[RMDB]
Structure probing data (2A3 and DMS) for a 170-nucleotide construct. In probing experiments dimethyl sulfate is read out at A N1 and C N3, which are open when not base-paired. Reactivities are rounded to 0.1 and cut off at 0 and 3. For 2A3 the reverse transcriptase was SuperScript II with manganese.
RNA sequence: GGGAACGACUCGAGUAGAGUCGAAAAGGCGGUCCUGAGAACUCUUAUCUUCCUGCUUAGAAGAGGAGUCUCCUGGACGCCCCGCCCGGUCGGGAUGGGCCGCAGUUCCCGACGAGGAGCCCGCAGGAUACCUGAGAGUUCGCUCUCAGGAAAAGAAACAACAACAACAAC
Reactivity to 2A3 in 0.01 (KOAc 150mM, MgCl2 10mM, bicine 150mM(pH8.5), 24C), signal-to-noise 9, nucleotides 027 to 129: g040g000c100g070g170u040c000c000u040g010a050g020a160a070c000u000c010u070u130a100u110c000u020u030c030c050u120g180c140u280u290a040g000a010a000g000a010g010g000a000g010u000c020u000c020c060u020g000g000a000c000g000c000c000c000c000g020c000c000c000g020g030u040c020g010g010g030a050u060g030g050g020c010c030g040c040a010g010u050u030c000c000c000g000a020c020g000a050g010g010a010g010c000c020c000g000c030a040g030g060a030u090a150
Reactivity to DMS in 0.01 (KOAc 150mM, MgCl2 10mM, bicine 150mM(pH8.5), 24C), signal-to-noise 9, nucleotides 027 to 129: g000g000c050g020g040u030c000c000u040g000a080g020a090a070c010u000c000u020u040a130u000c020u020u030c030c140u040g060c230u070u070a140g000a000a030g000a010g010g010a030g000u000c060u020c040c070u030g000g000a040c000g000c000c010c000c020g000c020c010c000g030g030u030c010g000g030g010a030u050g010g000g010c030c050g010c050a110g000u000u020c000c000c000g000a070c050g010a070g020g020a000g020c080c030c010g000c070a050g000g000a110u000a090